An RNA of 207 nucleotides, treated with DMS and 2A3 and read out base by base.
RNA sequence: GGGAACGACUCGAGUAGAGUCGAAAAAGCCAUACCAUUACGAUGGUAUGGCAAGUCCGUCACGGCGAUGGAUCCCGCCUGGCCGAUGCCGAACUGCCGAUCUGGCUGAUGGUUCCUGCCCCGUCAAAAAACGUAAAGCACUUCGGUGCUUUACGAACAGACAACAUGUGUUCGCACAUGUUGUCUGAAAAGAAACAACAACAACAAC
Reactivity to DMS in 0.01 (KOAc 150mM, MgCl2 10mM, bicine 150mM(pH8.5), 24C), signal-to-noise 1, nucleotides 027 to 156: a140g000c000c010a020u010a000c000c010a040u000u000a080c280g040a120u000g010g030u000a010u000g030g040c000a010a000g000u000c010c000g010u000c040a070c120g040g040c120g020a110u000g000g010a060u000c030c030c030g000c030c010u000g010g010c020c030g020a170u020g000c050c060g000a040a090c060u000g030c000c040g020a110u000c050u010g020g030c000u020g000a140u000g000g000u000u020c050c050u000g000c000c010c010c040g060u020c080a060a040a090a020a050a130c000g020u010a000a010a000g010c000a010c000u000u010c300g020g000u000g000c010u000u000u000a000c000g010a050a080
Reactivity to 2A3 in 0.01 (KOAc 150mM, MgCl2 10mM, bicine 150mM(pH8.5), 24C), signal-to-noise 3, nucleotides 027 to 156: a010g010c000c000a000u000a000c000c000a000u030u070a060c250g100a030u010g020g000u000a000u000g000g000c000a010a010g010u010c000c000g030u030c020a000c100g040g000c010g020a050u070g060g030a080u090c000c020c000g040c010c030u050g020g000c010c030g060a020u130g040c010c020g070a110a080c060u060g020c010c010g110a170u110c070u130g040g000c010u020g060a100u130g010g000u030u050c000c000u040g010c010c010c000c010g110u100c060a000a050a050a060a060a060c020g000u000a010a000a000g000c000a000c000u040u130c260g060g000u000g000c000u010u000u000a000c000g010a000a000
DMS adducts were read by reverse transcription with MarathonRT. The DMS profile rests on 2,338 reads. The RNA was probed in 150 mM KOAc, 10 mM MgCl2 and 150 mM bicine (pH 8.5) at 24 C.